[RMDB]
RNA sequence: GGGAACGACUCGAGUAGAGUCGAAAAAAUACUUCUCUAAACAAUUUUAACUCUUUUUAAACGUUUUUACGUUCAAACUACCCAGUCAAAAUGAAUCCCUGCUCCUGCAACUGCUGCUCCGGCAACUCGUAUCAAUUCCGUUCGCGGAAUUGAUACGAAAAGAAACAACAACAACAAC
Reactivity to 2A3 in 0.01 (KOAc 150mM, MgCl2 10mM, bicine 150mM(pH8.5), 24C), signal-to-noise 1, nucleotides 027 to 126: a000a000u140a010c010u050u050c000u010c000u050a070a080a080c040a070a090u110u100u180u150a070a010c010u070c060u020u090u030u040u090a060a090a020c030g000u040u020u020u140u290a010c010g000u000u070c030a010a060a110c020u050a140c050c040c000a000g090u080c050a080a000a040a140u140g030a040a000u050c000c000c020u060g000c000u030c000c030u020g060c030a060a040c030u080g000c000u010g000c010u000c010c000g000g070c030a080a000c040u000

Record summary: An RNA of 177 nucleotides, treated with 2A3 and read out base by base. It was measured as part of the RMDB library RFM100. Values are in units of 0.01, from 0 to 300, in steps of 10. The 2A3 profile rests on 437 reads. For 2A3 the reverse transcriptase was SuperScript II with manganese.